[RMDB]
RNA sequence: GGGAACGACUCGAGUAGAGUCGAAAAGGCAGGUCCAUCCCAUUCCUGGGAGUCCAAGAGAGCUGGGAGGCUGCAACUGAUCUCUGCAGACCAGAGGCCAAGCCCUGUGGAGCGUCUCAAGGCCAAAGAAGGGAUAGACGUUCGCGUCUAUCCCUUCAAAAGAAACAACAACAACAAC
Reactivity to DMS in 0.01 (KOAc 150mM, MgCl2 10mM, bicine 150mM(pH8.5), 24C), signal-to-noise 1, nucleotides 027 to 126: g020g010c030a060g010g000u040c040c120a170u000c010c000c020a180u000u020c010c070u010g010g000g000a070g000u000c030c030a060a220g010a140g010a020g010c070u020g000g030g010a090g010g000c050u070g020c070a060a110c030u000g010a060u020c050u000c090u010g000c110a070g000a130c070c010a080g010a230g010g010c010c020a140a140g000c020c030c050u000g010u000g000g010a080g030c060g020u000c010u000c020a070a210g040g020c080c080a060a040a100

Source: RMDB library OK2TRN, as collected in RNAgym. This 177-nucleotide RNA was probed chemically with DMS. The reactions ran in a buffer of 150 mM KOAc, 10 mM MgCl2 and 150 mM bicine (pH 8.5), at 24 C. For DMS the reverse transcriptase was MarathonRT.